An RNA of 177 nucleotides, treated with 2A3 and DMS and read out base by base. The RNA was probed in 150 mM KOAc, 10 mM MgCl2 and 150 mM bicine (pH 8.5) at 24 C. It was measured as part of the RMDB library OK2TRN.
RNA sequence: GGGAACGACUCGAGUAGAGUCGAAAAUGAUCGGCAAGGCACCUAGUUGGAUGGAUGGUCAAAGUGACCACAGAAGAAAGAAAUGACCAAACCGACCAAGCUGCAGAUGGUGGACCGUACCGUACGGUACGCCGAAUGACUUCGGUCAUUCGGCGUAAAAAGAAACAACAACAACAAC
Reactivity to 2A3 in 0.01 (KOAc 150mM, MgCl2 10mM, bicine 150mM(pH8.5), 24C), signal-to-noise 2, nucleotides 027 to 126: u100g000a020u050c010g000g060c090a020a050g030g000c030a000c010c030u040a040g060u040u030g080g000a100u050g080g030a040u040g030g000u010c000a060a100a160g170u060g020a070c000c030a030c010a060g140a120a000g140a050a190a000g030a030a060a060u040g000a030c000c000a060a090a100c010c000g030a060c030c050a060a070g070c080u080g010c060a070g080a240u160g020g010u070g020g000a030c000c000g020u090a070c000c010g050u050a020c070g030g040
Reactivity to DMS in 0.01 (KOAc 150mM, MgCl2 10mM, bicine 150mM(pH8.5), 24C), signal-to-noise 3, nucleotides 027 to 126: u010g010a070u000c030g000g000c000a150a240g000g020c030a070c300c040u010a110g000u000u000g020g010a230u010g000g030a090u000g010g000u010c010a080a150a130g000u010g000a060c090c020a020c120a070g020a130a080g010a070a040a150g010a030a100a130u000g000a050c050c010a010a070a100c050c010g010a050c040c020a010a070g010c090u000g060c090a100g020a090u000g010g000u000g030g000a070c040c040g000u000a100c080c040g000u010a120c050g000g020